Structure probing data (DMS and 2A3) for a 177-nucleotide construct. DMS adducts were read by reverse transcription with MarathonRT. The 2A3 profile rests on 7,525 reads. Conditions: 150 mM KOAc, 10 mM MgCl2 and 150 mM bicine (pH 8.5), 24 C. The DMS profile rests on 6,162 reads.
RNA sequence: GGGAACGACUCGAGUAGAGUCGAAAACGCGUAGGCUUCCCCCGCAAGUCACUGUUAGCCCGCCAAGAAGCGACCCCUCCGGGGCGAGCUGAGCGGCGUGCGGCGGGGUGUCAUCCGUCAGUUCUCCUCCACUAUAGCGUUUCGACGCUAUAGUGGAAAAAGAAACAACAACAACAAC
Reactivity to DMS in 0.01 (KOAc 150mM, MgCl2 10mM, bicine 150mM(pH8.5), 24C), signal-to-noise 4, nucleotides 027 to 126: c100g010c120g050u030a110g000g000c000u000u020c080c010c020c010c010g030c000a040a040g030u020c030a080c040u020g000u020u030a050g040c030c020c000g020c000c000a090a050g000a080a010g000c060g010a290c300c030c050c010u010c130c060g000g010g000g010c000g000a150g030c000u010g010a090g010c150g010g000c000g020u000g000c030g000g000c100g010g010g000g000u020g010u000c010a140u000c120c000g000u010c040a120g010u000u000c020u000c020c200
Reactivity to 2A3 in 0.01 (KOAc 150mM, MgCl2 10mM, bicine 150mM(pH8.5), 24C), signal-to-noise 7, nucleotides 027 to 126: c040g020c020g030u060a060g010g010c010u100u120c000c010c010c000c000g000c020a070a060g030u130c020a010c060u070g080u210u050a030g020c000c020c010g010c010c000a070a050g100a100a040g070c030g090a120c020c000c000c000u060c090c140g090g010g010g000c000g010a010g000c000u010g000a030g020c010g000g000c020g000u000g000c000g000g010c060g000g010g010g010u010g010u000c040a210u070c050c000g030u040c050a030g000u010u010c020u010c020c000